Conditions: 150 mM KOAc, 10 mM MgCl2 and 150 mM bicine (pH 8.5), 24 C. The record gives the reactivity of an RNA of 177 nucleotides to DMS and 2A3. It was measured as part of the RMDB library OK2TST.
RNA sequence: GGGAACGACUCGAGUAGAGUCGAAAACUGUGCGGGGCCUCUCGAAUUGAAAGAGGAAGAGAAGUUGCGCAAAUCGGUACGAUUUGCCGACGACUGCGGACAUGAGCUCUACAUGGUCCGCGUGGCAAUUACUCCUCAUGUUCGCAUGAGGAGUAAUAAAAGAAACAACAACAACAAC
Reactivity to DMS in 0.01 (KOAc 150mM, MgCl2 10mM, bicine 150mM(pH8.5), 24C), signal-to-noise 5, nucleotides 027 to 126: c040u010g020u000g010c040g010g010g010g010c020c010u000c020u010c030g010a200a170u010u010g010a100a090a100g000a030g010g010a140a090g010a100g010a070a130g000u000u000g000c170g010c000a000a020a030u000c000g020g020u020a130c140g010a030u000u000u000g000c000c000g010a030c020g000a090c080u000g010c000g010g000a050c000a010u000g000a120g010c110u000c100u000a130c010a020u010g000g010u000c010c000g010c000g010u000g010g000c130a100
Reactivity to 2A3 in 0.01 (KOAc 150mM, MgCl2 10mM, bicine 150mM(pH8.5), 24C), signal-to-noise 3, nucleotides 027 to 126: c030u050g050u090g080c060g010g020g090g020c000c000u000c010u000c040g060a140a150u140u150g040a070a070a030g020a010g050g030a110a030g040a010g030a200a010g030u020u050g040c060g000c090a020a000a000u060c040g100g100u200a120c110g020a020u010u020u020g010c000c000g000a010c010g020a000c020u110g020c000g000g010a000c000a000u020g020a030g060c030u060c030u170a090c000a000u060g070g070u050c000c000g020c030g010u040g040g000c020a050